[RMDB]
RNA sequence: GGGAACGACUCGAGUAGAGUCGAAAAUCAUUGAGAUGCUGGGCGCUAUGGUCGUACUCCUCCGGCUGACCUCCUUCUCAGCUGCUGACCGGCGCCGCACAGGCGGCAUCUCAGCUUCGUGUGCAAAAAAAGAAUGGUCGGUUCGCCGACCAUUCAAGUACUAGAGCAACUUCGGUUGCUCUAGUACAAAAGAAACAACAACAACAAC
Reactivity to 2A3 in 0.01 (KOAc 150mM, MgCl2 10mM, bicine 150mM(pH8.5), 24C), signal-to-noise 2, nucleotides 027 to 156: u110c050a050u060u040g000a000g010a000u000g010c000u040g030g030g000c010g030c020u070a240u300g000g000u020c040g070u100a080c030u070c010c020u080c020c000g020g020c000u020g000a010c010c020u120c060c040u300u100c050u000c020a000g000c000u010g040c080u070g000a000c000c000g010g000c000g000c000c000g040c000a030c000a000g210g000c030g030g000c020a000u000c000u000c000a000g000c010u230u230c090g110u120g050u110g080c110a050a090a000a000a000a110a090g000a010a010u000g030g000u000c000g040g020u020u070c200g020c030c000g010a000c000c000a000u000u000c000a000a000
Reactivity to DMS in 0.01 (KOAc 150mM, MgCl2 10mM, bicine 150mM(pH8.5), 24C), signal-to-noise 2, nucleotides 027 to 156: u000c060a130u000u010g010a020g010a010u000g000c000u000g000g010g000c020g000c000u000a020u010g070g000u010c020g000u000a050c100u000c020c010u020c040c020g000g010c010u000g020a010c080c040u010c120c100u010u010c030u000c010a030g000c010u000g000c060u000g010a020c020c000g000g030c000g020c010c010g060c060a070c130a120g010g020c050g020g030c000a020u000c010u000c000a030g000c060u010u010c110g000u000g000u000g000c020a010a000a110a150a100a200a200g010a020a010u010g010g020u000c000g010g000u000u010c300g040c010c000g010a000c000c000a000u010u000c010a050a140

Background:
Structure probing data (2A3 and DMS) for a 207-nucleotide construct. Conditions: 150 mM KOAc, 10 mM MgCl2 and 150 mM bicine (pH 8.5), 24 C.